[RMDB]
Chemical mapping of a 177-nucleotide RNA with 2A3 and DMS. For DMS, 745 sequencing reads were counted. The RNA was probed in 150 mM KOAc, 10 mM MgCl2 and 150 mM bicine (pH 8.5) at 24 C.
RNA sequence: GGGAACGACUCGAGUAGAGUCGAAAAGUCUCACGAGUGCAUAGACAAAGGUAGUUGACUCCGGUGCUACCAGUACUCGAAAGAAUGCGAAAGAGUUCAUGUAUUCCAACCGGAGAAGAACUCAAAACCCUGGAUAGGUGUUCGCACCUAUCCAGGGAAAAGAAACAACAACAACAAC
Reactivity to 2A3 in 0.01 (KOAc 150mM, MgCl2 10mM, bicine 150mM(pH8.5), 24C), signal-to-noise 2, nucleotides 027 to 126: g030u000c000u000c000a000c000g000a000g000u050g030c000a110u230a160g040a210c070a060a120a010g020g000u020a010g020u010u020g070a030c000u000c000c000g070g000u030g000c010u000a000c000c080a040g030u020a000c000u000c000g020a000a030a000g080a030a000u270g000c060g020a120a090a110g030a100g050u000u000c020a040u120g070u150a150u290u210c130c000a020a020c000c000g000g000a000g000a000a000g000a000a000c000u000c000a000a050a050a070
Reactivity to DMS in 0.01 (KOAc 150mM, MgCl2 10mM, bicine 150mM(pH8.5), 24C), signal-to-noise 1, nucleotides 027 to 126: g000u010c070u000c030a300c000g030a040g010u000g080c000a120u070a000g000a140c300a180a070a090g040g050u000a000g000u000u000g000a010c000u000c000c040g000g130u000g050c000u000a000c000c000a030g000u000a000c000u000c000g000a300a000a000g000a050a170u000g000c000g000a150a100a160g000a030g000u000u000c000a300u040g000u030a000u000u050c140c200a010a000c000c000g010g000a010g000a110a180g010a000a050c000u030c000a000a040a030a280